The data come from the RNA Mapping Database (RMDB), library RNAMAK. Chemical mapping of a 207-nucleotide RNA with 2A3 and DMS. The RNA was probed in 150 mM KOAc, 10 mM MgCl2 and 150 mM bicine (pH 8.5) at 24 C.

RNA sequence: GGGAACGACUCGAGUAGAGUCGAAAACGCUGGGCAGCUCGACAUGCGACACCUGAAGCGCGCACGGGUGAUCGCAACAGCGAGGCUGCCUGUGCUGAAGCGCGCACGGCAACCGAAAGGUGCGAAACUACAAAGAUCCUUCGGGAUCUUUGUAGAACUAUUAGGGAAAGUUCGCUUUCCCUAAUAGAAAAGAAACAACAACAACAAC
Reactivity to 2A3 in 0.01 (KOAc 150mM, MgCl2 10mM, bicine 150mM(pH8.5), 24C), signal-to-noise 4, nucleotides 027 to 156: c060g010c030u090g000g020g000c000a000g010c020u030c060g190a210c110a150u080g010c000g000a000c000a000c010c000u050g040a220a060g010c000g000c010g020c030a020c020g010g000g020u050g040a300u000c000g000c020a040a020c040a030g130c020g020a040g080g010c020u020g000c000c000u020g010u040g010c050u140g030a090a010g010c010g020c000g010c010a010c020g060g020c040a130a160c020c000g060a130a030a020g000g000u010g000c020g010a110a050a000c000u010a000c000a000a000a000g000a000u010c010c000u060u140c230g040g000g000a000u000c000u000u010u000g000u000a010g000a000a000
Reactivity to DMS in 0.01 (KOAc 150mM, MgCl2 10mM, bicine 150mM(pH8.5), 24C), signal-to-noise 2, nucleotides 027 to 156: c060g010c000u000g000g000g000c020a080g030c010u000c020g040a130c110a160u000g000c000g010a080c000a030c010c000u000g000a060a090g020c030g000c030g000c030a250c000g000g040g020u000g010a150u000c020g000c000a050a060c130a130g020c070g020a130g010g010c000u010g000c010c000u000g000u000g020c030u010g000a130a150g020c060g000c040g000c010a090c090g040g000c030a160a070c010c030g000a090a110a270g010g010u000g010c020g010a100a120a220c010u010a000c000a020a010a010g000a000u000c000c000u000u000c300g050g020g000a000u010c000u010u010u020g000u000a000g010a050a190